[RMDB]
RNA sequence: GGGAACGACUCGAGUAGAGUCGAAAACUGCUUAUUGCCUGAGGCAACUCGAAGAGCUUUUCUAAACUAUCUUAGUUCAAGCUUUCUAUAAGGGAUAAGCACUUCAAAGAGAGUUGGUCACCCAAGCGUAGAGUUCUAAUUUCGAUUAGAACUCUACAAAAGAAACAACAACAACAAC
Reactivity to DMS in 0.01 (KOAc 150mM, MgCl2 10mM, bicine 150mM(pH8.5), 24C), signal-to-noise 4, nucleotides 027 to 126: c170u000g010c000u010u010a040u000u000g020c010c000u000g010a090g010g000c220a100a130c040u000c060g000a120a030g000a040g000c000u000u000u000u000c030u010a030a030a110c150u030a080u010c130u000u000a010g010u010u000c140a030a030g000c020u000u000u000c110u010a140u000a200a030g000g000g010a020u000a000a020g010c010a050c090u000u000c110a030a080a140g010a170g010a030g010u000u010g000g000u010c110a150c010c000c020a090a120g010c240
Reactivity to 2A3 in 0.01 (KOAc 150mM, MgCl2 10mM, bicine 150mM(pH8.5), 24C), signal-to-noise 4, nucleotides 027 to 126: c020u000g010c010u010u020a030u020u120g300c010c010u030g020a040g050g000c050a060a080c040u030c060g040a060a020g010a000g110c000u010u050u030u000c020u040a060a080a130c070u120a150u300c060u070u030a020g000u080u030c040a030a010g000c000u040u070u000c060u080a230u020a220a050g010g010g000a000u000a010a000g000c000a010c020u080u120c070a070a160a030g130a000g000a000g020u010u050g020g040u120c070a120c100c010c010a040a000g110c040